RNA sequence: GGGAACGACUCGAGUAGAGUCGAAAAUUAAGUAUUAUGUUGUGUUUGCAUAUUGUUCGGGAAACCGAACGCAAGUAACUUAGUUACUUAUUUAACUUCCUGUAUAUUUUUAAACCUAAUUUUGGGUCAUAGGUUAGAACUUCGGUUCUAACCUAUGAAAAGAAACAACAACAACAAC
Reactivity to 2A3 in 0.01 (KOAc 150mM, MgCl2 10mM, bicine 150mM(pH8.5), 24C), signal-to-noise 1, nucleotides 027 to 126: u030u030a010a000g000u000a000u020u000a030u050g000u010u010g000u050g120u130u000u100g000c000a020u110a050u300u300g000u000u020c000g000g000g000a020a100a030c000c000g000a000a030c010g000c000a000a000g000u010a000a000c000u020u000a000g080u100u000a010c000u000u000a000u110u060u020a110a110c010u020u000c000c000u020g010u090a300u000a100u160u210u100u070u300a060a110a080c000c000u070a120a120u080u130u190u130g010g000g000u000
An RNA of 177 nucleotides, treated with 2A3 and read out base by base. Reactivities are given for positions 27 through 126. The reactions ran in a buffer of 150 mM KOAc, 10 mM MgCl2 and 150 mM bicine (pH 8.5), at 24 C. Source: RMDB library RFMREP, as collected in RNAgym.